Conditions: 150 mM KOAc, 10 mM MgCl2 and 150 mM bicine (pH 8.5), 24 C. Structure probing data (2A3 and DMS) for a 177-nucleotide construct.

RNA sequence: GGGAACGACUCGAGUAGAGUCGAAAAACAUCUAGACGGUUCAUUGUAUAUAGACCAGGGAGGGACUUGUUUGUCAUCGCCAAUCUGCUUUACAACGUGAUGGGAUUAAAGAAGUCUCAGAUAGAUAUGGUAAGAGACUGUUCGCAGUCUCUUACCAAAAAGAAACAACAACAACAAC
Reactivity to 2A3 in 0.01 (KOAc 150mM, MgCl2 10mM, bicine 150mM(pH8.5), 24C), signal-to-noise 3, nucleotides 027 to 126: a000c020a040u060c010u040a050g020a030c010g000g020u060u090c030a010u100u080g110u200a160u070a050u250a180g040a020c000c000a010g100g040g030a120g010g000g000a010c010u090u050g140u190u030u040g140u100c050a080u050c020g190c070c010a090a190u010c020u050g140c070u120u190u040a080c050a120a040c090g010u010g040a050u010g000g000g000a050u080u200a040a080a030g060a080a010g000u000c000u020c050a020g000a040u100a060g000a010u070a130
Reactivity to DMS in 0.01 (KOAc 150mM, MgCl2 10mM, bicine 150mM(pH8.5), 24C), signal-to-noise 3, nucleotides 027 to 126: a070c040a070u000c020u000a020g020a080c030g020g010u010u000c110a040u010u030g020u050a180u070a060u010a090g020a040c040c010a060g030g000g000a150g040g000g010a060c070u010u000g020u000u030u000g010u000c080a050u000c030g000c010c030a070a070u020c030u040g020c110u000u010u040a060c130a110a080c130g020u000g010a110u000g010g010g000a070u010u040a020a010a060g000a060a060g010u010c000u010c040a060g010a060u020a040g000a060u000a070
The DMS profile rests on 3,562 reads. For 2A3, 1,317 sequencing reads were counted.